[RMDB]
RNA sequence: GGGAACGACUCGAGUAGAGUCGAAAAAAAAAGAUAUGGAGGGUGAGAGCUUGGAUUUACAGGGUGAGGUGGUCGGAAACGACCAUGGAGCCCUGUUGUCAGCUCUCCACCCUCCUAAGUCAAAAAAUCAUGCAUAACACUUCGGUGUUAUGCAUGAAAAAGAAACAACAACAACAAC
Reactivity to DMS in 0.01 (KOAc 150mM, MgCl2 10mM, bicine 150mM(pH8.5), 24C), signal-to-noise 1, nucleotides 027 to 126: a060a040a100a130a110g010a060u000a300u000g000g010a010g000g010g000u000g000a070g000a010g070c000u000u010g000g000a000u010u010u000a010c000a030g000g010g070u000g000a300g050g020u000g000g010u000c000g000g000a180a100a190c010g000a000c020c000a000u000g000g040a300g000c000c000c000u000g010u000u000g000u000c000a010g000c000u000c000u000c060c020a010c000c000c000u000c000c000u030a020a020g030u000c000a000a040a090a050a050a100